An RNA of 207 nucleotides, treated with 2A3 and DMS and read out base by base. 2A3 adducts were read by reverse transcription with SuperScript II with manganese.

RNA sequence: GGGAACGACUCGAGUAGAGUCGAAAAAAUAUUUGACGCAAUAUUUCAAUUGGCGCUUCCGUUAAACUAGCGAUUAUCACCAUAUGAGACAUGAUAUAGCCGUGUGUUGCCAACUUAUCGAUAAUUUCAGGUGAUCUGCGCUCGACCAAAGCAUAACUAUAUACAGAACUUUCGAGUUCUGUAUAUAAAAAGAAACAACAACAACAAC
Reactivity to 2A3 in 0.01 (KOAc 150mM, MgCl2 10mM, bicine 150mM(pH8.5), 24C), signal-to-noise 3, nucleotides 027 to 156: a000a000u090a010u040u030u080g040a040c020g030c030a020a040u030a060u050u190u110c070a090a060u080u050g060g020c000g020c030u080u000c020c020g030u040u190a080a080a020c060u040a050g020c000g070a060u040u080a020u070c010a030c030c010a040u060a110u300g080a030g040a040c030a060u100g040a020u040a020u040a100g050c050c060g070u060g030u020g040u110u120g020c000c010a040a030c040u080u010a040u060c000g090a080u040a140a100u110u070u070c020a000g010g000u010g010a050u000c010u090g010c010g010c000u040c020g040a050c020c060a060a040a000g120c100a040u180a120a030c020
Reactivity to DMS in 0.01 (KOAc 150mM, MgCl2 10mM, bicine 150mM(pH8.5), 24C), signal-to-noise 2, nucleotides 027 to 156: a100a020u000a040u000u000u000g030a060c110g040c060a130a050u000a030u000u010u010c070a070a240u000u000g030g010c060g040c050u000u010c030c020g010u010u000a020a050a110c080u000a070g020c020g000a130u000u000a040u000c010a020c030c010a070u010a130u000g000a110g010a080c200a090u020g010a060u000a050u000a080g020c060c040g010u000g050u000g020u020u000g020c040c040a050a020c020u000u000a070u000c040g010a060u010a040a070u000u000u000c010a070g010g030u000g020a070u000c070u000g020c000g020c060u000c050g010a150c060c020a050a030a110g010c060a070u010a060a050c110
For DMS the reverse transcriptase was MarathonRT.